Chemical mapping of a 177-nucleotide RNA with DMS.
RNA sequence: GGGAACGACUCGAGUAGAGUCGAAAAAAAAGAUAUGGACGGUUUCUCUAGCGUGGCGCAUAGGAACCGUGUCGGAAACGACACUCAGUACUAUGAACUACGCUCGGGAACCGUCCUAAGUCAAAAAGUCUUCAAUUAGGUUCGCCUAAUUGAAGACAAAAGAAACAACAACAACAAC
Reactivity to DMS in 0.01 (KOAc 150mM, MgCl2 10mM, bicine 150mM(pH8.5), 24C), signal-to-noise 2, nucleotides 027 to 126: a060a040a110a200g010a090u000a300u010g000g000a020c000g000g000u030u000u010c000u000c040u000a000g030c000g020u000g000g030c300g020c000a000u010a010g020g020a060a050c260c280g000u000g000u010c000g000g000a080a070a300c000g000a030c000a000c000u000c040a060g010u020a160c000u010a000u000g000a050a060c020u010a000c000g030c000u000c150g010g000g000a010a020c010c000g030u000c030c000u010a010a060g000u010c010a090a110a140a190a150